Source: RMDB library TTRDES, as collected in RNAgym. An RNA of 177 nucleotides, treated with 2A3 and DMS and read out base by base. The reactions ran in a buffer of 150 mM KOAc, 10 mM MgCl2 and 150 mM bicine (pH 8.5), at 24 C. Reactivities are given for positions 27 through 126. The DMS profile rests on 1,322 reads.
RNA sequence: GGGAACGACUCGAGUAGAGUCGAAAAGAUAUGGAUCGAGAAUGUUUCGACAGUAUUCGGAAACGAAUAUACUGUGCAUCUCGAUCCUAAGUCAAAAGCAGUGUCCUCCUUCGGGAGGACACUGCAACUGUGUACUAGACUUCGGUCUAGUACACAGAAAAGAAACAACAACAACAAC
Reactivity to 2A3 in 0.01 (KOAc 150mM, MgCl2 10mM, bicine 150mM(pH8.5), 24C), signal-to-noise 1, nucleotides 027 to 126: g020a020u020a030u150g000g000a020u020c040g000a000g000a300a260u040g070u130u300u300c160g100a030c000a030g040u040a010u000u030c000g010g000a060a090a050c000g040a050a000u220a020u020a120c030u010g000u050g050c000a010u000c010u010c000g000a000u030c000c000u000a020a010g000u000c020a000a010a120a120g000c040a000g020u010g030u000c020c000u050c020c010u030u090c260g000g010g010a000g000g000a010c020a000c020u010g000c000a000a000
Reactivity to DMS in 0.01 (KOAc 150mM, MgCl2 10mM, bicine 150mM(pH8.5), 24C), signal-to-noise 1, nucleotides 027 to 126: g000a030u010a300u000g020g000a010u000c000g010a030g020a060a080u000g020u000u000u000c270g010a030c030a030g010u000a040u000u000c000g020g000a190a070a190c000g000a030a030u000a070u000a040c060u000g010u000g000c000a000u010c000u000c000g010a020u000c000c000u000a000a080g000u000c010a110a080a170a090g020c010a040g000u000g030u000c000c000u000c000c000u000u050c180g010g060g000a010g000g000a000c010a000c000u000g010c010a020a040